[RMDB]
Notes: An RNA of 177 nucleotides, treated with DMS and 2A3 and read out base by base. Source: RMDB library TTRDEL, as collected in RNAgym. Conditions: 150 mM KOAc, 10 mM MgCl2 and 150 mM bicine (pH 8.5), 24 C. DMS adducts were read by reverse transcription with MarathonRT. 2A3 adducts were read by reverse transcription with SuperScript II with manganese.
RNA sequence: GGGAACGACUCGAGUAGAGUCGAAAAGAUAUGGAAACUGCCUGAUGACCCAGGCUCCCCACCUCGGAAACGAGAGGCCUGGCAAGGGCUAGUUUCCUAAGUCAAAACGCUGGGUUCGCCCAGCGAACAGUAUAACCGUGUUCGCACGGUUAUACUGAAAAGAAACAACAACAACAAC
Reactivity to DMS in 0.01 (KOAc 150mM, MgCl2 10mM, bicine 150mM(pH8.5), 24C), signal-to-noise 3, nucleotides 027 to 126: g000a030u000a300u000g010g010a010a000a010c010u000g000c000c000u000g000a100u010g010a130c300c010c010a000g000g000c030u000c030c000c030c020a300c100c020u000c000g020g020a140a100a170c010g000a020g000a140g010g000c010c010u000g010g000c040a070a070g000g000g000c000u000a000g000u000u000u000c000c000u000a010a100g000u000c040a080a070a130a110c030g000c000u010g000g000g000u000u000c190g010c000c000c000a010g020c000g010a000a050
Reactivity to 2A3 in 0.01 (KOAc 150mM, MgCl2 10mM, bicine 150mM(pH8.5), 24C), signal-to-noise 2, nucleotides 027 to 126: g010a050u120a040u090g000g000a020a000a000c000u010g030c000c000u200g110a300u180g010a100c020c020c000a000g010g010c010u060c040c020c000c010a080c020c010u000c000g030g020a130a110a060c000g000a000g000a000g050g020c000c000u000g010g020c010a140a220g030g020g000c170u170a010g000u000u010u010c000c000u010a110a020g050u040c040a000a030a110a170c010g000c000u030g000g050g030u050u040c230g100c060c000c000a000g000c010g000a020a000
For DMS, 1,804 sequencing reads were counted. The 2A3 profile rests on 3,588 reads.